[RMDB]
RNA sequence: GGGAACGACUCGAGUAGAGUCGAAAAAAAAAGAUAUGGACGAUCCUGGAGGAGGUAGGCGAUUCUAUACUCGGAAACGAGUAUAGGGCCUACUACCCACCCUCCUGGAUCGUCCUAAGUCAAAAAAGUAUAAGAAGGACUUCGGUCCUUCUUAUACAAAAGAAACAACAACAACAAC
Reactivity to DMS in 0.01 (KOAc 150mM, MgCl2 10mM, bicine 150mM(pH8.5), 24C), signal-to-noise 2, nucleotides 027 to 126: a050a070a050a070a060g000a030u010a300u000g000g000a030c010g030a010u010c000c010u000g000g000a010g000g000a060g000g000u000a000g000g010c120g000a070u000u000c000u000a000u000a010c000u000c000g000g010a120a110a180c010g000a010g000u000a000u000a000g000g010g000c020c000u000a080c000u000a010c010c010c050a300c230c000c000u000c000c000u000g020g000a010u000c000g000u000c000c000u000a000a090g030u020c030a000a030a090a090a070a110

Conditions: 150 mM KOAc, 10 mM MgCl2 and 150 mM bicine (pH 8.5), 24 C. Structure probing data (DMS) for a 177-nucleotide construct. It was measured as part of the RMDB library TTRDES. For DMS, 1,732 sequencing reads were counted.